Structure probing data (DMS) for a 177-nucleotide construct.
DMS adducts were read by reverse transcription with MarathonRT.
It was measured as part of the RMDB library OK2TST.
Conditions: 150 mM KOAc, 10 mM MgCl2 and 150 mM bicine (pH 8.5), 24 C.
Reactivities are given for positions 27 through 126.
[RMDB]
RNA sequence: GGGAACGACUCGAGUAGAGUCGAAAAUUGGUGCGCCCCCCACUGCCGAUCGCCAGAGGCGGAAGUCGCAUCCUCACUGGCUCAAAUGCCAGGGUUCUGCCACUACAGGCACGUGAAUCCUGCAUAGUAAUGCGGAAUCUUUCGAGAUUCCGCAUUAAAAAGAAACAACAACAACAAC
Reactivity to DMS in 0.01 (KOAc 150mM, MgCl2 10mM, bicine 150mM(pH8.5), 24C), signal-to-noise 2, nucleotides 027 to 126: u000u030g020g010u000g040c080g010c060c020c000c020c000c020a100c090u000g010c080c030g000a080u000c120g000c060c080a040g000a190g020g010c020g020g010a090a060g010u030c080g050c040a090u000c020c040u010c090a130c030u000g000g030c040u010c160a070a090a050u000g020c090c080a010g000g020g000u000u000c010u000g010c000c030a120c150u010a150c280a140g000g040c060a110c200g000u000g000a070a020u000c030c000u000g000c020a050u000a120g000